[RMDB]
RNA sequence: GGGAACGACUCGAGUAGAGUCGAAAAAGCACAGGACGCGCAUCGGCAGUAUGGGAGCUUAGCCCCCAGGCUUUAAACUUCAUUAUUCCAUUGAGAAAGUAGUCCUUAUUGGUCUCCUGAGGAAUUGGAGUUUAUAUUCUUUCGAGAAUAUAAACUCAAAAGAAACAACAACAACAAC
Reactivity to 2A3 in 0.01 (KOAc 150mM, MgCl2 10mM, bicine 150mM(pH8.5), 24C), signal-to-noise 3, nucleotides 027 to 126: a000g040c060a050c020a000g010g070a020c050g040c010g000c060a040u060c040g050g000c010a020g030u080a070u100g030g000g010a030g000c020u120u080a060g030c010c010c000c000c010a030g010g020c020u030u100u160a050a070a020c020u070u040c030a060u030u220a040u120u050c020c030a050u080u170g010a060g020a100a080a000g040u050a010g010u050c020c000u050u080a160u090u100g020g000u010c010u010c030c010u040g020a040g030g060a040a020u090u120g060
Reactivity to DMS in 0.01 (KOAc 150mM, MgCl2 10mM, bicine 150mM(pH8.5), 24C), signal-to-noise 6, nucleotides 027 to 126: a090g010c050a060c090a070g010g010a070c070g020c090g010c050a070u000c090g000g010c060a060g010u000a050u000g010g010g010a050g010c010u000u000a110g000c020c010c030c040c060a120g010g010c050u000u000u010a030a090a080c050u000u010c050a070u010u010a080u000u000c020c030a150u010u000g000a120g000a070a080a090g010u000a060g010u000c020c020u000u000a100u000u010g000g010u000c050u000c030c070u010g010a120g000g000a070a090u000u010g010
Annotation:
The record gives the reactivity of an RNA of 177 nucleotides to 2A3 and DMS. Source: RMDB library OK2TRN, as collected in RNAgym. For 2A3 the reverse transcriptase was SuperScript II with manganese. The RNA was probed in 150 mM KOAc, 10 mM MgCl2 and 150 mM bicine (pH 8.5) at 24 C. For 2A3, 4,348 sequencing reads were counted.